RNA sequence: GGGAACGACUCGAGUAGAGUCGAAAAUCGAUUUCAUCGGCGGCUUGUUCGGCGGUAACGCCUCGGGCAAAGGCGUCGGCGGUAUCGACAUCGACGAGAUGACCGGGGAUGUCGGCACGCUCUCGGGAGGUGCUGGGCUCGAUGUCCAGGUGACCACACGUACCGAAGCAUUCGUGCUUCGGUACGUAAAAGAAACAACAACAACAAC
Reactivity to 2A3 in 0.01 (KOAc 150mM, MgCl2 10mM, bicine 150mM(pH8.5), 24C), signal-to-noise 2, nucleotides 027 to 156: u000c000g000a000u000u080u160c030a020u020c050g000g000c000g040g050c000u030u000g000u000u020c030g010g060c120g080g020u090a180a130c090g200c010c000u000c090g030g000g000c020a120a080a020g080g050c060g000u010c000g000g000c020g000g010u030a000u020c010g010a010c030a050u030c010g100a080c040g000a000g020a160u080g080a060c020c010g090g060g000g100a020u050g030u100c010g000g000c000a030c080g050c030u000c000u040c090g050g030g130a070g030g050u140g020c050u100g000g120g000c030u050c070g050a060u110g010u040c020c000a000g110g060u090g030a020c000c000a040c020

Annotation
The record gives the reactivity of an RNA of 207 nucleotides to 2A3. Source: RMDB library OK3TST, as collected in RNAgym.